[RMDB]
RNA sequence: GGGAACGACUCGAGUAGAGUCGAAAACAACUGUUCGCAGUUGCAAACGUCCUAAGUCAUCGAGAGGCAAAGGGAGCCAUAUGUCGGAAACGACAUGUGGCGAAGAACUUUGCUCCCCACCUCGAUGAUAUGGAAUAUCCGCCUGUUCGCAGGCGAAAGGUUCGUAGGAAUUCGUUCCUACGAACCUAAAAGAAACAACAACAACAAC
Reactivity to DMS in 0.01 (KOAc 150mM, MgCl2 10mM, bicine 150mM(pH8.5), 24C), signal-to-noise 1, nucleotides 027 to 156: c010a000a070c020u010g000u000u010c280g230c060a050g050u050u000g040c000a060a010a140c050g000u000c040c000u020a120a300g040u000c000a000u010c020g010a010g000a300g040g000c000a100a030a010g000g000g000a300g000c020c000a020u010a000u000g000u000c010g040g090a250a140a260c000g040a030c030a000u000g070u000g000g010c030g000a020a030g000a160a130c020u000u000u000g000c020u000c160c120c050c050a300c230c010u000c000g010a010u000g000a000u000a260u010g000g000a100a180u000a040u000c060c030g040c000c000u000g000u000u000c270g050c010a010g080g040c000g000a000a100
Reactivity to 2A3 in 0.01 (KOAc 150mM, MgCl2 10mM, bicine 150mM(pH8.5), 24C), signal-to-noise 2, nucleotides 027 to 156: c000a010a010c020u080g000u140u170c260g010c090a010g010u030u020g040c060a060a050a100c140g080u020c000c000u040a150a030g020u000c000a000u000c000g000a000g010a010g020g000c000a000a000a000g010g020g010a020g010c000c000a000u030a010u010g000u000c000g060g030a110a030a050c000g010a000c000a000u000g010u020g010g000c000g010a020a020g000a020a010c000u010u000u000g000c020u080c020c000c000c030a040c010c000u010c000g000a000u000g000a010u000a030u040g040g000a050a030u060a090u150c080c020g000c000c000u020g050u160u140c270g020c150a020g020g000c000g000a050a100